[RMDB]
RNA sequence: GGGAACGACUCGAGUAGAGUCGAAAAGAAAGAAAGAACCCUUCCCGCGGGGCUGGAUCUUCCAGAUGGUGCGGGCCGGGACAAGCCGGAGAUUGUCCCGGUUUCAGAAACAACCUUCGGCAGCCAAACUAGACUACCCACUUCGGUGGGUAGUCAACUACUAUCAUGAGUUCGCUCAUGAUAGUAGAAAAGAAACAACAACAACAAC
Reactivity to 2A3 in 0.01 (KOAc 150mM, MgCl2 10mM, bicine 150mM(pH8.5), 24C), signal-to-noise 1, nucleotides 027 to 156: g010a010a020a000g040a010a130a010g050a130a150c020c000c000u000u000c000c000c000g040c020g000g000g000g000c000u020g000g040a090u190c070u110u090c110c000a000g010a000u030g000g150u070g030c000g000g000g000c010c000g010g010g000a010c010a010a030g010c000c010g020g000a000g020a080u050u090g000u010c000c010c020g000g000u000u010u000c000a010g020a010a050a010c040a040a120c040c010u020u020c000g030g020c010a050g070c080c030a040a060a090c060u080a050g000a000c010u000a000c000c020c000a010c020u020u040c180g110g000u010g020g000g000u000a000g000u000c000a000a000